RNA sequence: GGGAACGACUCGAGUAGAGUCGAAAAGCGUUUAGCUUCGGCUAAACGCAAAUAAGCUGACCAGCUAUGAGGUCAUACAUCGUCAUAGCUCAAAGAAAGAGAAAACACCUCUGUUCGCAGAGGUGAACGUAUCAGAUAAGUUCGCUUAUCUGAUACGAAAAGAAACAACAACAACAAC
Reactivity to 2A3 in 0.01 (KOAc 150mM, MgCl2 10mM, bicine 150mM(pH8.5), 24C), signal-to-noise 9, nucleotides 027 to 126: g000c000g000u000u000u000a010g000c010u020u040c190g060g000c000u010a000a000a000c000g010c000a000a000a000u010a000a010g110c070u030g010a010c000c010a000g000c000u000a010u010g010a010g010g020u020c040a040u150a190c080a100u140c140g100u000c010a000u010a010g000c020u020c060a150a180a050g150a080a090a000g150a010g060a020a100a020a020c010a000c000c000u000c000u010g030u070u080c240g010c070a000g000a000g000g000u000g000a000a000
Reactivity to DMS in 0.01 (KOAc 150mM, MgCl2 10mM, bicine 150mM(pH8.5), 24C), signal-to-noise 9, nucleotides 027 to 126: g010c000g010u000u000u000a000g010c000u000u010c220g030g010c000u000a000a000a010c000g010c000a010a030a040u010a090a130g020c150u000g000a060c040c050a170g000c000u000a010u000g010a030g000g010u000c080a070u010a100c230a050u010c120g000u000c000a010u000a010g010c000u000c160a070a100a080g010a060a090a090g000a130g000a080a080a100a130c010a010c000c000u000c000u000g000u000u010c160g020c000a010g000a020g010g000u000g000a020a050

Structure probing data (2A3 and DMS) for a 177-nucleotide construct. Values cover nucleotides 27 to 126. The RNA was probed in 150 mM KOAc, 10 mM MgCl2 and 150 mM bicine (pH 8.5) at 24 C. For DMS, 20,885 sequencing reads were counted. The data come from the RNA Mapping Database (RMDB), library M2PK50.